[RMDB]
RNA sequence: GGGAACGACUCGAGUAGAGUCGAAAACAGGAGGUUAGCAUAGCUCCAUUCUACUAUGCAGCUAGUCGUCGUUUUCGACGUCUAGGAUAGACCGCUACAGCAGGGUCGAUGAACUGCUGAUUACCGCGUCUCGUAGCGCGGGUUCUGGCUACGUACAAUUAUCGAUCAGUUUCGACUGAUCGAUAAUAAAAGAAACAACAACAACAAC
Reactivity to DMS in 0.01 (KOAc 150mM, MgCl2 10mM, bicine 150mM(pH8.5), 24C), signal-to-noise 3, nucleotides 027 to 156: c050a160g010g010a050g030g010u000u000a130g020c000a010u000a000g000c000u000c100c300a200u000u000c020u010a010c000u000a010u000g010c000a300g000c010u000a030g020u000c010g010u000c010g070u000u010u010u010c020g010a010c000g000u000c010u010a030g010g000a160u010a150g010a010c010c020g010c010u000a130c010a030g020c000a040g000g010g040u000c060g000a150u000g020a060a080c000u000g000c010u000g010a200u000u000a070c000c010g020c020g000u010c060u010c190g020u000a130g000c010g040c000g000g000g000u000u000c050u010g010g000c060u000a080c070g020u000a120c120a120
Reactivity to 2A3 in 0.01 (KOAc 150mM, MgCl2 10mM, bicine 150mM(pH8.5), 24C), signal-to-noise 4, nucleotides 027 to 156: c040a020g010g010a000g010g020u150u190a010g010c000a010u000a000g000c000u020c040c000a050u130u060c030u040a070c010u000a000u020g000c000a020g050c010u010a000g010u010c010g000u000c010g030u060u010u150u300c040g010a000c000g000u020c000u000a000g020g000a010u090a060g020a020c010c010g000c090u100a050c030a010g000c010a010g010g000g010u020c090g060a050u180g030a020a030c010u000g000c000u010g020a140u030u110a060c020c000g020c010g050u010c060u030c110g120u110a010g010c010g000c000g000g040g000u050u060c060u060g100g000c010u040a030c050g060u040a030c100a090

This 207-nucleotide RNA was probed chemically with DMS and 2A3. The data come from the RNA Mapping Database (RMDB), library OK3TST. Conditions: 150 mM KOAc, 10 mM MgCl2 and 150 mM bicine (pH 8.5), 24 C.